[RMDB]
RNA sequence: GGGAACGACUCGAGUAGAGUCGAAAAACACAAAGAGCUUCCUGUGGGAAAGCAGGACCCAGGAUGGAGGAAUGGAAAAGUCUGAACACCAAGGAAACUCGGAGAGGGGGUUCAGACACUCCUCUCCGGUUUACGUGGAAUUCGUUCCACGUAAACCAAAAGAAACAACAACAACAAC
Reactivity to DMS in 0.01 (KOAc 150mM, MgCl2 10mM, bicine 150mM(pH8.5), 24C), signal-to-noise 2, nucleotides 027 to 126: a080c060a090c130a020a090a140g000a100g020c040u010u000c010c010u000g000u010g010g020g010a050a090a070g010c030a100g010g000a090c040c010c020a090g020g020a080u000g000g000a040g020g010a130a070u000g030g010a060a070a140a110g010u010c010u000g010a070a080c080a120c050c010a070a090g000g010a140a060a120c150u010c070g030g010a050g020a040g020g020g000g010g000u000u000c090a080g030a040c110a030c050u000c000c010u000c000u010c010c030
Reactivity to 2A3 in 0.01 (KOAc 150mM, MgCl2 10mM, bicine 150mM(pH8.5), 24C), signal-to-noise 2, nucleotides 027 to 126: a000c070a000c050a030a160a000g070a030g030c030u050u040c000c020u080g060u120g060g070g070a090a120a040g040c040a020g020g010a020c050c010c000a010g090g020a040u180g010g060a060g010g040a150a140u170g010g020a070a070a060a020g010u040c010u000g000a020a010c010a030c050c010a020a020g070g030a120a030a070c140u110c200g080g000a070g010a040g050g020g020g000g010u020u140c070a000g020a020c020a020c030u010c000c000u030c020u010c000c040